Chemical mapping of a 177-nucleotide RNA with 2A3 and DMS.
Values cover nucleotides 27 to 126.
RNA sequence: GGGAACGACUCGAGUAGAGUCGAAAAGAUAUGGACGUUAUUGCGAGGUCCACUCGGAAACGAGUGAAGACCGAUGAGCAAGACGUCCUAAGUCAAACGUAACUCUAGCUUCGGCUAGAGUUACGAAUCACUACUUAGUCUUCGGACUAAGUAGUGAAAAAGAAACAACAACAACAAC
Reactivity to 2A3 in 0.01 (KOAc 150mM, MgCl2 10mM, bicine 150mM(pH8.5), 24C), signal-to-noise 4, nucleotides 027 to 126: g000a000u020a010u070g010g000a000c010g010u010u040a300u300u190g020c080g080a080g000g000u000c000c000a000c000u000c010g010g000a020a010a000c000g000a010g010u020g040a240a030g000a000c020c010g010a190u180g010a010g000c010a020a010g010a000c010g000u010c000c000u000a000a000g000u000c030a150a050a070c010g000u000a000a000c000u010c000u010a010g010c000u080u100c300g100g000c000u010a010g000a000g000u000u000a010c000g000a000a010
Reactivity to DMS in 0.01 (KOAc 150mM, MgCl2 10mM, bicine 150mM(pH8.5), 24C), signal-to-noise 5, nucleotides 027 to 126: g000a000u000a040u010g000g010a010c010g000u000u000a120u000u000g030c000g000a060g010g030u000c010c010a010c000u000c000g010g000a010a000a030c000g010a020g010u000g000a240a170g010a010c000c010g030a100u010g000a300g020c010a020a020g000a010c000g010u000c000c000u000a000a060g000u000c010a110a130a280c000g000u000a000a000c000u000c000u000a000g000c000u000u020c280g020g000c010u000a000g000a010g000u000u000a000c000g010a070a090